[RMDB]
RNA sequence: GGGAACGACUCGAGUAGAGUCGAAAAGAUAUGGACCCAUUAGGGAGAAGUCUGUCGGAAACGACAGCUUCUUUGAUCUAAGGGUCCUAAGUCAAAAGAGAUCUAGUGGUUCGCCACUAGAUCUCAACCGUCUUACUAUGUUCGCAUAGUAAGACGGAAAAGAAACAACAACAACAAC
Reactivity to DMS in 0.01 (KOAc 150mM, MgCl2 10mM, bicine 150mM(pH8.5), 24C), signal-to-noise 4, nucleotides 027 to 126: g010a020u000a300u000g000g000a020c000c010c000a120u010u000a020g000g000g000a060g000a020a010g000u020c010u000g010u010c010g020g000a080a060a150c010g010a000c000a010g010c000u000u000c000u010u000u010g010a140u010c000u000a020a050g010g000g000u000c000c000u000a000a080g000u010c000a080a100a130a190g000a010g010a010u000c000u000a000g010u000g000g000u000u010c300g010c000c000a000c000u000a010g000a000u000c000u000c000a030a080
Reactivity to 2A3 in 0.01 (KOAc 150mM, MgCl2 10mM, bicine 150mM(pH8.5), 24C), signal-to-noise 3, nucleotides 027 to 126: g020a000u060a040u110g000g000a010c000c000c030a070u020u030a030g020g020g050a110g000a020a010g060u200c040u020g000u000c000g000g030a060a030a020c020g010a000c010a010g000c000u010u010c000u030u060u140g030a020u010c000u020a010a040g000g000g020u010c000c000u000a020a020g020u010c020a050a050a080a170g000a000g000a000u020c000u000a000g000u000g030g020u090u170c300g070c120c000a010c000u000a000g000a000u000c000u010c000a000a000

An RNA of 177 nucleotides, treated with DMS and 2A3 and read out base by base. The 2A3 profile rests on 10,258 reads. The reactions ran in a buffer of 150 mM KOAc, 10 mM MgCl2 and 150 mM bicine (pH 8.5), at 24 C. Values cover nucleotides 27 to 126. DMS adducts were read by reverse transcription with MarathonRT. The DMS profile rests on 5,743 reads. For 2A3 the reverse transcriptase was SuperScript II with manganese.